An RNA of 177 nucleotides, treated with 2A3 and DMS and read out base by base. Source: RMDB library M2PK50, as collected in RNAgym. The RNA was probed in 150 mM KOAc, 10 mM MgCl2 and 150 mM bicine (pH 8.5) at 24 C. The DMS profile rests on 8,579 reads.

RNA sequence: GGGAACGACUCGAGUAGAGUCGAAAAGGAACGUUGUUCGCAACGUUCCGUGCCGGAAACGGACAUGACCAUCGCGCGCAUGUCGGGAAACCGUAAACGCGAGCAUCAUGGUGUUCGCACCAUGAAACUGAUAUUCCGAAUUCGUUCGGAAUAUCAGAAAAGAAACAACAACAACAAC
Reactivity to 2A3 in 0.01 (KOAc 150mM, MgCl2 10mM, bicine 150mM(pH8.5), 24C), signal-to-noise 6, nucleotides 027 to 126: g000g000a000a000c010g000u000u010g020u050u080c230g020c110a000a000c000g000u000u000c000c000g000u030g020c010c000g040g010a100a080a030c040g030g030a040c020a060u100g050a060c000c020a120u120c080g000c000g000c000g000c070a030u120g080u130c000g000g010g020a060a040a020c010c010g010u070a010a080a040c040g020c020g010a020g060c030a080u050c000a000u010g000g010u010g020u050u050c200g000c060a000c000c000a000u010g020a060a050a020
Reactivity to DMS in 0.01 (KOAc 150mM, MgCl2 10mM, bicine 150mM(pH8.5), 24C), signal-to-noise 6, nucleotides 027 to 126: g000g010a010a010c000g020u000u000g010u000u010c250g030c010a010a000c010g010u000u000c000c010g010u000g020c010c010g010g000a070a110a210c040g000g000a040c090a060u000g010a160c030c010a140u000c090g010c030g000c060g000c050a190u010g000u000c000g000g000g000a090a080a140c040c010g010u010a050a110a090c060g010c010g000a050g010c190a160u000c000a010u000g000g040u000g010u000u010c150g020c020a010c000c000a020u000g010a040a090a140